[RMDB]
RNA sequence: GGGAACGACUCGAGUAGAGUCGAAAAAUGCAAAAUGAAGGGCUCGUUUGGUAAUAUACGAAACAGUUGGCAACGCGGCUGCUGCUCUUCGGCAGAGAGCGAGAGCAGGAGCAGGAGAGAGCGGCGCUCUGUAUCCUCGUUUCGACGAGGAUACAGAAAAAGAAACAACAACAACAAC
Reactivity to 2A3 in 0.01 (KOAc 150mM, MgCl2 10mM, bicine 150mM(pH8.5), 24C), signal-to-noise 1, nucleotides 027 to 126: a000u130g030c040a100a090a030a040u180g090a140a060g050g000g070c050u050c150g080u030u040u020g100g020u020a130a050u100a150u050a160c050g120a040a080a040c010a040g050u080u050g130g000c030a060a080c040g050c030g100g070c060u070g060c010u000g060c040u030c010u050u120c040g030g030c040a030g050a010g030a010g200c030g010a010g010a000g000c020a020g040g010a000g020c020a020g000g000a070g010a030g000a010g000c020g000g000c010g000c030
Reactivity to DMS in 0.01 (KOAc 150mM, MgCl2 10mM, bicine 150mM(pH8.5), 24C), signal-to-noise 2, nucleotides 027 to 126: a080u020g000c060a060a080a130a070u010g020a120a090g030g040g020c060u010c080g000u000u000u000g000g010u000a080a100u010a120u000a020c080g010a070a050a060c080a070g010u000u010g040g030c040a060a130c110g010c080g010g020c020u010g000c000u000g020c000u010c020u000u000c020g020g040c060a060g000a160g020a100g010c030g010a110g000a080g000c020a020g010g010a120g020c010a040g010g010a070g000a090g000a110g020c040g010g000c100g000c090